An RNA of 177 nucleotides, treated with DMS and 2A3 and read out base by base.

RNA sequence: GGGAACGACUCGAGUAGAGUCGAAAAGAGCACGUUGCAGUUUCUAGCUUCUUCGGCGGUUUCUUGCUAGUUUCUUUCUGCUGGACCGUUUCUUUCUUUCCGCCGUCGGUCCUAUUCGUGCUCGAGAGGGACGUUAGGCGUUCGCGCCUGGCGUCCCAAAAGAAACAACAACAACAAC
Reactivity to DMS in 0.01 (KOAc 150mM, MgCl2 10mM, bicine 150mM(pH8.5), 24C), signal-to-noise 3, nucleotides 027 to 126: g000a000g000c010a010c000g040u010u040g010c070a010g020u010u010u020c010u010a040g000c010u000u020c080u010u020c020g010g000c130g010g020u010u010u010c090u030u000g020c020u000a040g010u030u020u010c150u020u030u000c030u010g010c040u000g030g010a020c010c010g010u010u010u020c040u020u030u030c110u010u010u000c030c040g010c030c040g020u010c030g030g000u000c010c010u040a080u030u000c000g000u010g010c020u000c000g000a090g000a180
Reactivity to 2A3 in 0.01 (KOAc 150mM, MgCl2 10mM, bicine 150mM(pH8.5), 24C), signal-to-noise 8, nucleotides 027 to 126: g010a000g010c010a010c020g020u070u120g000c010a030g010u040u130u060c000u000a020g010c020u130u060c020u150u110c090g020g010c020g030g040u050u170u120c080u100u110g010c010u010a030g020u080u120u070c090u060u210u020c010u040g030c030u050g000g010a010c010c010g040u040u110u050c060u010u200u030c020u030u110u010c000c020g010c010c000g030u030c010g000g000u000c000c000u010a100u020u070c000g000u000g000c000u000c000g000a020g020a010
For 2A3, 8,272 sequencing reads were counted. The data come from the RNA Mapping Database (RMDB), library OK1LIB. DMS adducts were read by reverse transcription with MarathonRT.